[RMDB]
RNA sequence: GGGAACGACUCGAGUAGAGUCGAAAACAUUGUUUUUAAUCCACUACUUGACUCACGAUUUGUCACUGUUAAUGAUUCAGGUACUUUUAAUAAAGAACCUAUGACCAUGACGAAACCAAAGAUAGUCACCACUUAUAUGAUUCGUCAUAUAAGUGGUAAAAGAAACAACAACAACAAC
Reactivity to DMS in 0.01 (KOAc 150mM, MgCl2 10mM, bicine 150mM(pH8.5), 24C), signal-to-noise 9, nucleotides 027 to 126: c050a150u010u010g010u010u000u000u010u010a080a140u000c040c060a110c120u000a050c090u000u000g010a060c060u010c110a080c140g000a160u000u000u000g010u000c020a070c150u010g010u000u010a070a080u010g010a100u000u000c160a030g000g020u000a040c010u000u000u000u010a070a150u010a060a020a030g010a070a020c000c010u000a080u000g010a070c270c040a050u000g000a020c020g010a050a070a120c100c040a050a070a060g000a100u000a060g010u000c110
Reactivity to 2A3 in 0.01 (KOAc 150mM, MgCl2 10mM, bicine 150mM(pH8.5), 24C), signal-to-noise 9, nucleotides 027 to 126: c040a100u110u140g080u050u060u010u020u110a080a070u050c030c010a070c090u130a050c020u070u080g020a020c010u020c040a050c070g100a120u020u020u060g020u010c020a020c080u030g030u080u070a200a090u130g090a080u130u110c060a010g010g000u030a050c000u060u070u030u140a300a210u270a130a090a010g010a020a010c010c010u030a070u120g020a020c010c020a020u020g010a010c010g030a060a030a030c040c020a080a060a010g060a100u090a030g010u030c020
This 177-nucleotide RNA was probed chemically with DMS and 2A3. 2A3 adducts were read by reverse transcription with SuperScript II with manganese. The reactions ran in a buffer of 150 mM KOAc, 10 mM MgCl2 and 150 mM bicine (pH 8.5), at 24 C. The data come from the RNA Mapping Database (RMDB), library OK2TRN.